An RNA of 177 nucleotides, treated with DMS and 2A3 and read out base by base. The RNA was probed in 150 mM KOAc, 10 mM MgCl2 and 150 mM bicine (pH 8.5) at 24 C. The 2A3 profile rests on 3,337 reads. The data come from the RNA Mapping Database (RMDB), library TTRDES.
RNA sequence: GGGAACGACUCGAGUAGAGUCGAAAAGAUAUGGAUCCAUCUAUGCACGCGAUGAAACAGCUCGGAAACGAGCUGUGGAGCGUGGCAUAGAGUGGAUCCUAAGUCAAAACGUCAGUUCGCUGACGAAGGGUAAAUACGUGUUCGCACGUAUUUACCCAAAAGAAACAACAACAACAAC
Reactivity to DMS in 0.01 (KOAc 150mM, MgCl2 10mM, bicine 150mM(pH8.5), 24C), signal-to-noise 2, nucleotides 027 to 126: g000a020u020a300u000g000g000a010u000c000c000a020u010c000u000a000u000g000c040a010c010g030c000g010a080u010g000a280a130a020c000a010g010c000u000c000g000g000a200a110a210c000g000a000g010c000u000g000u000g000g000a080g010c000g030u000g020g050c000a010u010a000g000a050g040u000g030g000a000u000c000c000u000a030a070g020u000c070a110a100a130a210c020g010u000c000a000g020u000u010c300g030c000u010g020a010c010g010a080a110
Reactivity to 2A3 in 0.01 (KOAc 150mM, MgCl2 10mM, bicine 150mM(pH8.5), 24C), signal-to-noise 2, nucleotides 027 to 126: g040a040u080a030u180g020g000a020u010c000c010a000u020c020u000a000u000g000c010a010c000g040c010g300a300u020g080a020a000a000c000a000g020c010u030c000g000g010a070a110a090c000g020a000g000c000u000g010u010g000g000a020g000c000g000u010g170g000c000a000u000a000g020a000g000u090g010g000a000u000c020c000u000a010a010g000u000c030a110a020a050a080c000g000u020c010a020g020u050u280c300g000c220u000g000a010c010g070a110a110